[RMDB]
RNA sequence: GGGAACGACUCGAGUAGAGUCGAAAAGAUAUGGAGUGACCCACGACAACUUGCGUUGAAAUCGGAAACGAUGGAGCAAGCUAAUCGUGCACUCCUAAGUCAAAAGCAAAGACUUCGGUCUUUGCAACCAUUCCAGCUGGUUCGCCAGCUGGAAUGGAAAAGAAACAACAACAACAAC
Reactivity to DMS in 0.01 (KOAc 150mM, MgCl2 10mM, bicine 150mM(pH8.5), 24C), signal-to-noise 1, nucleotides 027 to 126: g000a010u000a300u000g010g000a000g000u000g010a080c160c250c010a010c000g020a020c170a200a070c000u000u000g050c000g010u000u000g000a070a100a030u000c020g000g020a100a070a210c000g030a010u000g000g000a060g000c000a000a000g010c000u000a110a260u010c000g060u000g060c000a000c000u000c000c030u000a040a090g000u000c010a120a100a080a250g030c020a010a010a000g000a000c000u000u000c240g010g020u000c000u000u000u000g010c020a020a120
Reactivity to 2A3 in 0.01 (KOAc 150mM, MgCl2 10mM, bicine 150mM(pH8.5), 24C), signal-to-noise 1, nucleotides 027 to 126: g020a030u050a030u160g010g000a000g020u040g090a220c130c050c040a000c010g000a020c010a160a030c000u000u000g000c040g300u300u160g040a060a070a000u020c000g020g000a080a080a000c000g000a020u020g010g020a020g050c010a000a000g000c010u120a170a090u020c010g040u010g000c000a000c000u000c000c020u000a150a010g010u010c040a090a030a040a050g000c010a000a000a000g000a030c000u100u150c300g160g000u000c060u030u010u000g000c000a000a000